RNA sequence: GGGAACGACUCGAGUAGAGUCGAAAACCUGGAGGAGAACCAUCUCCAGGAUGAAGGUGUAUGUUCUCUCGCAGAAGGACUGAAGAAAAAUUCAAGUUUGAAAAUCCUGAAGUAAGGAACCCAUAAGUAUUAUGCUCACGUUCGCGUGAGCAUAAUAAAAAGAAACAACAACAACAAC
Reactivity to DMS in 0.01 (KOAc 150mM, MgCl2 10mM, bicine 150mM(pH8.5), 24C), signal-to-noise 1, nucleotides 027 to 126: c010c000u010g010g000a030g020g030a120g000a090a250c220c120a040u000c000u000c000c040a000g000g000a060u020g010a020a050g010g010u000g000u010a060u000g020u000u000c010u000c000u000c170g040c020a040g000a280a040g010g030a070c020u030g000a070a140g000a000a130a080a080a150u020u120c130a100a050g070u010u000u000g000a100a060a080a110u000c020c000u040g000a150a070g000u000a090a080g000g010a080a080c030c040c050a070u020a150a080g000